[RMDB]
RNA sequence: GGGAACGACUCGAGUAGAGUCGAAAAGGACGGACCGUAUGCGCCCACCGGAGUGGCGUAGUGAUCGAGGAUGAAGGUGGUGUCGGGAUAUUCCCGCGCGAGCGUGAUCGCGUCGGGUAAUUGGUGGGACGGGCAUUUUAUUCGUAAAAUGCCCGUCAAAAGAAACAACAACAACAAC
Reactivity to 2A3 in 0.01 (KOAc 150mM, MgCl2 10mM, bicine 150mM(pH8.5), 24C), signal-to-noise 2, nucleotides 027 to 126: g000g000a010c070g020g010a000c000c000g050u100a060u120g060c000g010c030c000c000a070c010c000g030g030a110g010u060g020g000c050g000u060a010g080u010g040a110u070c060g010a020g100g000a040u070g080a060a030g030g070u070g000g000u070g020u020c030g070g000g000a040u110a000u090u070c010c010c000g000c020g000c000g020a010g000c110g090u120g070a090u000c000g000c030g090u210c110g050g000g000u020a040a030u050u090g030g030u110g010g020
Reactivity to DMS in 0.01 (KOAc 150mM, MgCl2 10mM, bicine 150mM(pH8.5), 24C), signal-to-noise 2, nucleotides 027 to 126: g000g010a140c080g000g030a090c060c030g020u020a020u000g030c000g040c040c040c020a080c080c120g050g020a140g040u010g000g020c000g000u040a010g020u000g010a050u000c070g000a080g000g000a040u010g000a120a130g000g000u010g000g000u000g000u020c040g000g050g000a120u070a070u010u030c000c020c000g030c020g030c040g000a010g000c230g000u010g000a170u000c000g020c030g020u060c020g040g010g000u000a020a010u000u000g000g000u000g010g000